[RMDB]
RNA sequence: GGGAACGACUCGAGUAGAGUCGAAAAAACUGCCGCCGUUUUGGCCUCGGAAUUGGAGCGAGUGCAGUCCCUGGUGGGCGAUAUGCAAAGACAACGCCACGAACUCAGCUCCGCAGUUCGCCAGCUACAGCUACCAAAAUUUCGAUUUUGGUAGCUGAAAAGAAACAACAACAACAAC
Reactivity to DMS in 0.01 (KOAc 150mM, MgCl2 10mM, bicine 150mM(pH8.5), 24C), signal-to-noise 3, nucleotides 027 to 126: a050a070c040u000g010c020c120g010c010c000g030u020u010u000u030g020g010c020c080u000c060g010g000a090a070u010u030g040g000a040g010c020g000a080g020u000g010c070a090g010u000c030c040c030u010g020g040u000g020g020g020c010g000a140u010a110u000g000c100a130a110a150g000a110c060a070a070c020g000c000c010a070c070g010a100a050c010u000c040a100g010c010u000c020c030g030c110a020g020u000u000c030g010c050c020a110g000c110u000a150
Reactivity to 2A3 in 0.01 (KOAc 150mM, MgCl2 10mM, bicine 150mM(pH8.5), 24C), signal-to-noise 1, nucleotides 027 to 126: a000a000c060u050g020c050c020g000c010c040g020u090u010u030u150g030g000c050c000u020c040g100g050a080a080u080u260g020g010a060g000c040g010a030g050u130g020c020a020g090u090c000c020c000u060g060g030u150g040g030g050c020g080a050u080a120u250g000c080a240a180a130g040a090c030a150a090c040g010c010c020a010c040g050a030a000c010u010c040a030g000c010u000c000c000g000c000a020g000u050u100c040g040c060c090a000g030c010u120a030

Description:
Structure probing data (DMS and 2A3) for a 177-nucleotide construct. 2A3 adducts were read by reverse transcription with SuperScript II with manganese. Conditions: 150 mM KOAc, 10 mM MgCl2 and 150 mM bicine (pH 8.5), 24 C. For 2A3, 974 sequencing reads were counted.